[RMDB]
RNA sequence: GGGAACGACUCGAGUAGAGUCGAAAACAUCGCGUAUUCGUACGCGAUGGUAGGGCUGUUUUUCUCGCUGACUUUCAGCCCCAAACAAAAAAGUCAGCAAUAUACGCGUAUCCUUCGGGAUACGCAAGUACAGAUAGCUUUUCGAAGCUAUCUGUACAAAAGAAACAACAACAACAAC
Reactivity to DMS in 0.01 (KOAc 150mM, MgCl2 10mM, bicine 150mM(pH8.5), 24C), signal-to-noise 4, nucleotides 027 to 126: c010a010u000c000g030c000g010u000a010u000u000c200g030u000a000c000g010c000g010a000u000g000g010u000a070g000g000g010c000u000g000u000u000u000u000u000c060u010c230g020c000u010g010a010c000u000u000u000c000a020g000c000c000c010c160a010a010a240c050a000a010a000a000a020a010g010u000c000a000g000c010a020a020u000a080u010a060c180g010c000g020u000a000u000c010c000u000u010c160g020g000g000a000u000a000c000g010c000a000a030
Reactivity to 2A3 in 0.01 (KOAc 150mM, MgCl2 10mM, bicine 150mM(pH8.5), 24C), signal-to-noise 4, nucleotides 027 to 126: c000a000u000c000g000c000g000u010a020u030u090c220g040u050a010c000g000c010g000a000u000g000g010u070a070g010g000g000c000u000g010u010u010u000u010u000c090u050c090g000c010u000g000a010c000u000u000u010c000a000g000c000c000c010c050a010a010a010c020a010a000a000a000a000a000g010u000c000a000g000c000a000a000u000a000u000a010c120g000c000g000u000a000u000c010c000u030u060c150g080g000g000a000u000a000c000g000c000a000a000